[RMDB]
RNA sequence: GGGAACGACUCGAGUAGAGUCGAAAAGAGAGAGAAGGAAAGAGAAUAUAUUGAGAGAAAACAUAAAAUGCUUCUGACUGACCUCUAGUAGGGCAGAGGUAGACAAUUUGUGUUUAUAACUUUGUGGCUACAAACUUCAGCUCAGUAUUUUACAGUAUAAAAUUUACUGAUUCGUCAGUAAAUUUUAAAAAGAAACAACAACAACAAC
Reactivity to DMS in 0.01 (KOAc 150mM, MgCl2 10mM, bicine 150mM(pH8.5), 24C), signal-to-noise 1, nucleotides 027 to 156: g010a170g040a090g010a070g000a080a040g010g020a050a110a070g000a170g000a070a070u020a050u010a070u000u000g000a050g000a200g020a110a050a080a060c040a030u010a000a020a040a150u010g010c010u000u010c040u000g000a140c030u000g000a020c040c040u000c070u010a170g030u010a030g030g010g020c000a050g000a300g000g020u010a040g050a080c050a030a140u000u000u020g050u010g000u020u000u000a050u010a110a110c050u010u000u010g000u000g020g000c020u000a130c040a030a060a070c060u000u000c040a030g000c030u010c020a040g000u000a020u000u010u010u000a070c010a050g020u000a280
Reactivity to 2A3 in 0.01 (KOAc 150mM, MgCl2 10mM, bicine 150mM(pH8.5), 24C), signal-to-noise 2, nucleotides 027 to 156: g060a010g000a010g000a000g000a000a020g020g020a050a050a000g020a000g030a090a000u100a000u030a030u100u120g020a020g000a000g010a060a060a050a000c020a020u080a030a080a030a000u040g010c020u020u130c060u050g260a300c040u060g030a040c040c040u020c020u080a130g090u120a020g060g010g000c010a000g000a010g010g030u010a020g040a060c020a040a040u020u010u070g000u010g000u000u030u020a100u030a110a070c040u030u050u070g040u020g070g000c020u050a050c070a030a070a030c030u110u090c030a020g010c010u020c030a000g010u030a030u020u080u050u070a030c050a010g240u300a010